[RMDB]
Chemical mapping of a 207-nucleotide RNA with DMS and 2A3.
The DMS profile rests on 7,184 reads.
The reactions ran in a buffer of 150 mM KOAc, 10 mM MgCl2 and 150 mM bicine (pH 8.5), at 24 C.
RNA sequence: GGGAACGACUCGAGUAGAGUCGAAAACGGACUCGUGUAGAGUCUUGUAAAUGCCAUCGACGCUGUCGUCCUUGAUGCUUUGCAGGAAACACGAACACAUUUGUUGACGACGCGUACCCGCCGAAAACAGAGUCGGGCUCGCGUGCGUAAAGGUGCCAUUACUUACGUUGUUCGCAACGUAAGUAAUAAAAGAAACAACAACAACAAC
Reactivity to DMS in 0.01 (KOAc 150mM, MgCl2 10mM, bicine 150mM(pH8.5), 24C), signal-to-noise 2, nucleotides 027 to 156: c040g030g000a080c070u000c010g010u010g000u020a080g020a130g010u000c000u000u020g000u010a000a040a030u010g040c050c010a050u000c020g010a030c010g000c080u010g020u000c040g020u000c000c010u000u000g000a140u000g010c050u000u000u000g010c000a070g020g010a040a200a090c010a010c050g030a030a080c080a080c050a120u010u000u000g010u010u010g010a130c010g000a020c020g020c030g020u000a020c020c020c000g070c020c030g020a110a070a120a240c160a140g010a210g030u000c010g020g020g040c000u000c000g010c010g020u010g000c030g040u000a020a070a100g000g020u000g000c050c060
Reactivity to 2A3 in 0.01 (KOAc 150mM, MgCl2 10mM, bicine 150mM(pH8.5), 24C), signal-to-noise 4, nucleotides 027 to 156: c060g070g070a030c050u020c030g020u030g030u070a080g050a060g240u010c010u000u010g000u000a000a090a040u180g060c130c010a020u040c030g000a010c020g080c240u220g060u300c030g010u030c030c060u040u150g010a020u030g010c010u000u010u010g040c030a010g030g000a010a060a000c020a000c020g030a120a000c080a020c040a180u050u060u120g060u010u040g040a000c010g000a000c000g000c000g000u010a020c000c000c000g000c030c000g070a080a110a030a030c120a080g060a020g140u160c000g000g020g000c030u000c000g010c000g030u150g080c000g010u040a080a090a030g070g030u090g050c030c020

For DMS the reverse transcriptase was MarathonRT. The 2A3 profile rests on 3,460 reads.